[RMDB]
An RNA of 177 nucleotides, treated with 2A3 and DMS and read out base by base. Values are in units of 0.01, from 0 to 300, in steps of 10.
RNA sequence: GGGAACGACUCGAGUAGAGUCGAAAAAUGAAGGCAUCGAUGGCCGUCACCAUGCAACCGAUAUGGGCGUAGAUGCCGCCGAUAAUCAAUUGGUCGCGGUUCCAGUCUUUCAUGCGUUGCAGAAGGAUGACCGUACUGAUUUCGAUCAGUACGGUCAAAAAGAAACAACAACAACAAC
Reactivity to 2A3 in 0.01 (KOAc 150mM, MgCl2 10mM, bicine 150mM(pH8.5), 24C), signal-to-noise 1, nucleotides 027 to 126: a000u090g010a000a010g000g000c020a030u020c110g190a150u190g080g000c010c000g030u030c010a030c020c000a030u040g010c000a060a050c060c000g040a040u050a060u180g090g020g000c010g030u030a040g010a110u120g000c020c000g000c000c010g010a030u090a020a140u150c070a020a110u060u100g060g000u020c030g000c020g000g000u060u000c020c010a010g020u030c000u040u050u030c040a060u070g000c020g090u010u150g000c010a000g000a070a010g060g050a030
Reactivity to DMS in 0.01 (KOAc 150mM, MgCl2 10mM, bicine 150mM(pH8.5), 24C), signal-to-noise 3, nucleotides 027 to 126: a160u000g020a090a070g020g010c030a030u010c120g000a180u020g010g010c000c010g000u010c160a100c060c030a070u000g020c060a050a060c110c060g000a050u000a040u000g000g000g010c030g020u010a130g030a040u000g010c090c000g010c040c030g000a050u000a070a090u030c150a090a120u030u010g000g020u010c120g020c020g020g020u000u000c060c050a200g010u000c040u000u010u010c050a060u000g020c100g020u000u000g020c010a060g010a090a050g000g010a150